[RMDB]
RNA sequence: GGGAACGACUCGAGUAGAGUCGAAAAGUCGGCAUGUAUGGCGAUGCAUAACCAACAUGCCCAUGGUUAUGGAUCGUAAAGUGUGCACUUUAUGGUCGGAAUGGAUCAUCCACAUAAAGUUGCAACCCACAGAUAUCGCUUUCGAGCGAUAUCUGUGAAAAGAAACAACAACAACAAC
Reactivity to 2A3 in 0.01 (KOAc 150mM, MgCl2 10mM, bicine 150mM(pH8.5), 24C), signal-to-noise 1, nucleotides 027 to 126: g120u050c020g020g000c070a050u050g050u240a180u160g110g030c000g030a010u020g080c010a000u010a040a020c000c000a010a050c040a160u230g080c060c000c010a020u000g050g000u000u050a030u020g060g040a020u020c010g020u070a100a040a010g120u150g030u040g080c000a010c000u000u000u030a070u070g110g070u100c110g060g000a110a120u140g070g070a020u010c000a000u000c060c010a030c000a040u010a020a070a000g080u130u060g030c020a010a080c010c030
Reactivity to DMS in 0.01 (KOAc 150mM, MgCl2 10mM, bicine 150mM(pH8.5), 24C), signal-to-noise 2, nucleotides 027 to 126: g000u000c090g020g030c030a040u000g040u010a070u000g000g010c000g000a000u010g010c000a020u000a010a010c000c000a040a080c180a120u010g000c070c020c030a140u000g010g000u000u000a000u000g010g010a000u030c020g000u010a050a100a190g010u000g000u000g030c030a050c000u000u000u000a000u000g000g020u000c150g030g030a020a140u010g010g010a100u010c130a170u000c020c010a020c010a030u000a010a020a010g020u000u020g000c030a050a140c040c080
Chemical mapping of a 177-nucleotide RNA with 2A3 and DMS. The DMS profile rests on 1,460 reads. For DMS the reverse transcriptase was MarathonRT. Conditions: 150 mM KOAc, 10 mM MgCl2 and 150 mM bicine (pH 8.5), 24 C.